[RMDB]
An RNA of 207 nucleotides, treated with 2A3 and read out base by base.
RNA sequence: GGGAACGACUCGAGUAGAGUCGAAAAGAUGGGUCCGAUGGAUUAAUGCGUCGCCAGCCAUUGGAUCCUGAUUGAUAGAUUGACGGCGACGGUCGGAUCACUCGGUAAUUCGGUGCUCUACGAGUGAUCCGUGAUGAUAGUUAAGACGAGCACCUAAACCCGGAUAUCAUUUCGAUGAUAUCCGGGUAAAAGAAACAACAACAACAAC
Reactivity to 2A3 in 0.01 (KOAc 150mM, MgCl2 10mM, bicine 150mM(pH8.5), 24C), signal-to-noise 1, nucleotides 027 to 156: g060a100u070g020g020g020u000c000c000g000a000u000g000g000a020u090u250a090a300u170g020c030g020u000c000g000c000c020a020g130c040c000a000u010u000g040g000a000u000c020c000u050g000a040u010u100g070a000u070a170g070a070u020u200g070a040c120g000g000c010g000a000c000g000g010u000c010g000g000a000u000c000a000c000u000c000g010g040u120a020a230u300u300c110g000g000u000g000c000u000c000u000a000c010g000a010g050u000g020a000u000c000c000g020u020g040a000u000g000a000u100a160g160u300u090a080a000g020a130c060g000a000g000c000a000c000c000u000a010a010
The data come from the RNA Mapping Database (RMDB), library OK3TST. Conditions: 150 mM KOAc, 10 mM MgCl2 and 150 mM bicine (pH 8.5), 24 C.